Conditions: 150 mM KOAc, 10 mM MgCl2 and 150 mM bicine (pH 8.5), 24 C. This 177-nucleotide RNA was probed chemically with 2A3 and DMS. Source: RMDB libraries RFM100 and RFMREP, as collected in RNAgym.

RNA sequence: GGGAACGACUCGAGUAGAGUCGAAAACACUGCUAAAUCUCAACCGGACGCCAUGCACAAUUGUUCCGUACUUCAUGCACGUUUUAUGCCGUAGUAUUCAGCAAAAGCAAGGCGGAUAAGUUUCCAUUAUCACUCCAACGUUCGCGUUGGAGUGAUAAAAAGAAACAACAACAACAAC
Reactivity to 2A3 in 0.01 (KOAc 150mM, MgCl2 10mM, bicine 150mM(pH8.5), 24C), signal-to-noise 2, nucleotides 027 to 126: c050a020c000u020g010c000u070a180a100a080u070c070u000c100a060a170c040c010g040g050a000c000g020c020c000a000u020g000c010a050c050a180a140u110u050g050u090u040c030c000g050u030a140c000u000u080c000a080u140g030c020a030c090g100u030u100u090u150a080u100g110c000c000g010u040a020g020u030a060u130u000c000a030g020c000a040a040a020a000g000c010a000a010g040g000c030g060g000a120u100a130a020g000u000u000u000c020c020a020u010
Reactivity to DMS in 0.01 (KOAc 150mM, MgCl2 10mM, bicine 150mM(pH8.5), 24C), signal-to-noise 1, nucleotides 027 to 126: c050a050c070u000g020c020u020a050a070a110u000c010u010c060a030a110c050c150g040g040a030c030g000c050c000a080u010g000c090a030c260a110a090u210u000g000u020u000c050c030g060u000a090c000u030u040c050a050u000g000c000a080c240g120u060u000u000u030a050u020g020c120c220g080u000a230g010u000a040u010u060c120a030g010c030a020a020a040a180g000c050a050a060g010g000c100g000g000a030u000a030a130g000u020u000u000c030c000a250u000